RNA sequence: GGGAACGACUCGAGUAGAGUCGAAAAGCUAGCAAGUGGUGCCGAUGCGCGCUAAGGCACCAUAGCCACCGAUGACCUGUAAGGUGGCAAACAGGUCAGCUAAGAAAAGCGCGCACGCGAAAGCGGAGCUGAGUGGAUCAUUCGUGAUCCACUCAGCAAAAGAAACAACAACAACAAC
Reactivity to 2A3 in 0.01 (KOAc 150mM, MgCl2 10mM, bicine 150mM(pH8.5), 24C), signal-to-noise 4, nucleotides 027 to 126: g100c080u140a030g050c100a160a030g040u010g010g000u000g010c000c000g020a010u120g000c000g020c000g000c000u000a000a000g000g010c000a000c000c000a000u000a010g000c000c000a000c000c000g250a260u120g010a000c000c020u000g020u000a040a000g020g010u010g010g010c020a020a050a040c060a000g030g040u070c030a030g020c070u100a100a050g110a120a170a020a000g000c010g000c000g000c020a000c000g020c000g020a110a000a010g000c010g020g020a070
Reactivity to DMS in 0.01 (KOAc 150mM, MgCl2 10mM, bicine 150mM(pH8.5), 24C), signal-to-noise 1, nucleotides 027 to 126: g000c020u010a070g000c040a050a130g040u000g000g020u000g020c000c000g000a100u000g000c000g000c020g000c000u000a270a170g000g000c000a000c000c000a000u000a020g040c060c030a060c010c000g000a110u000g030a020c000c010u000g000u000a120a180g050g030u060g050g060c110a080a070a170c140a050g000g090u000c000a100g000c150u060a050a150g000a050a100a040a050g000c030g000c000g000c010a010c000g010c030g000a030a090a090g040c010g000g000a140